This 177-nucleotide RNA was probed chemically with 2A3. For 2A3 the reverse transcriptase was SuperScript II with manganese.
RNA sequence: GGGAACGACUCGAGUAGAGUCGAAAAGGUGAGGGCAUCGGCUCGUUGGAUCUCAUCAGAAUACUGCCCGAGACGCGUAGGUAUCUGGGGUGGCGCCUCUCGCUGCUGGAUCUGAUCGGUGCCGAUAGCGAACGACUCGUUUCGACGAGUCGUUCGCAAAAGAAACAACAACAACAAC
Reactivity to 2A3 in 0.01 (KOAc 150mM, MgCl2 10mM, bicine 150mM(pH8.5), 24C), signal-to-noise 1, nucleotides 027 to 126: g070g040u070g050a050g050g040g050c000a030u000c020g090g000c000u030c040g040u100u100g010g010a000u000c130u040c000a110u080c040a020g040a080a090u240a260c000u110g020c000c070c000g050a030g010a000c210g030c040g010u020a080g270g010u070a080u070c000u050g090g000g000g000u010g030g070c020g090c000c010u140c000u000c030g000c010u060g050c040u090g010g000a000u000c000u010g000a050u140c040g200g000u080g000c000c000g000a000u040a000
Conditions: 150 mM KOAc, 10 mM MgCl2 and 150 mM bicine (pH 8.5), 24 C.